[RMDB]
Description
The record gives the reactivity of an RNA of 177 nucleotides to DMS and 2A3. For 2A3, 967 sequencing reads were counted. Values cover nucleotides 27 to 126.
RNA sequence: GGGAACGACUCGAGUAGAGUCGAAAACAUCCAGUGUUCGCACUGGAUGAGAGGAAUGUGGAUCGGCAAACUACAUACCAUAAGCUGAGCUCGAAAGAGCAACGAUUUCGUCGUUCGCGACGAAAAACAACUCAAGGCCUUUCGAGGCCUUGAGUUGAAAAGAAACAACAACAACAAC
Reactivity to DMS in 0.01 (KOAc 150mM, MgCl2 10mM, bicine 150mM(pH8.5), 24C), signal-to-noise 1, nucleotides 027 to 126: c000a000u010c000c000a020g030u000g030u010u000c300g020c040a010c020u000g000g000a000u000g000a080g030a130g070g010a120a040u000g000u000g010g020a060u000c020g010g020c080a150a080a090c030u010a040c040a040u000a140c030c060a060u020a070a150g010c110u000g020a170g030c000u000c000g000a060a030a070g000a040g020c050a020a060c240g000a230u000u000u000c000g000u000c000g010u010u010c160g020c020g020a000c000g020a000a000a000a070a070
Reactivity to 2A3 in 0.01 (KOAc 150mM, MgCl2 10mM, bicine 150mM(pH8.5), 24C), signal-to-noise 1, nucleotides 027 to 126: c010a000u000c000c000a000g010u000g000u060u100c170g110c060a010c000u000g000g000a000u000g000a020g020a020g000g060a110a020u040g050u050g000g050a120u120c120g110g070c170a070a150a010c020u040a040c010a040u080a110c020c010a040u030a210a020g100c070u090g160a010g030c010u020c020g040a080a010a050g000a000g010c030a050a020c020g080a040u000u050u010c010g040u000c010g060u040u000c170g000c000g040a000c000g000a000a000a000a000a000